Chemical mapping of a 177-nucleotide RNA with 2A3 and DMS.
2A3 adducts were read by reverse transcription with SuperScript II with manganese.
RNA sequence: GGGAACGACUCGAGUAGAGUCGAAAAAUGACUCGCAGACUGCUAGGUUCAACACAGGUUGGAGUGGGAGUCAUGCAAGAGGGAGUCUUCCACACCAUGUGGCACGUUACAAAAGGAGCCGCACUGACCUGAUUUACCCUUUCGAGGGUAAAUCAGGAAAAGAAACAACAACAACAAC
Reactivity to 2A3 in 0.01 (KOAc 150mM, MgCl2 10mM, bicine 150mM(pH8.5), 24C), signal-to-noise 4, nucleotides 027 to 126: a000u100g000a040c010u010c030g000c000a010g000a050c030u040g060c000u170a050g030g300u040u040c040a050a020c090a030c100a190g300g110u060u020g030g040a080g030u000g000g010g000a000g010u000c050a080u070g010c020a070a060g020a060g100g160g030a020g030u020c000u010u000c000c000a070c000a020c050c000a050u110g010u010g030g030c040a030c130g120u120u240a050c150a070a140a010a000g090g000a050g000c000c020g000c030a010c090u080g020a050
Reactivity to DMS in 0.01 (KOAc 150mM, MgCl2 10mM, bicine 150mM(pH8.5), 24C), signal-to-noise 2, nucleotides 027 to 126: a100u020g000a090c000u000c000g010c050a030g000a080c060u000g020c000u010a110g010g010u010u010c090a010a020c020a120c230a180g000g020u000u010g040g000a050g020u010g000g000g000a000g000u000c040a080u040g000c110a150a100g000a110g050g010g000a020g020u000c000u000u000c000c010a170c120a180c200c060a110u020g120u060g000g020c020a160c030g010u040u010a180c230a100a000a190a150g000g000a140g020c000c000g050c040a010c150u000g010a150

Source: RMDB library OK1LIB, as collected in RNAgym. The DMS profile rests on 1,601 reads. For 2A3, 2,957 sequencing reads were counted. Conditions: 150 mM KOAc, 10 mM MgCl2 and 150 mM bicine (pH 8.5), 24 C.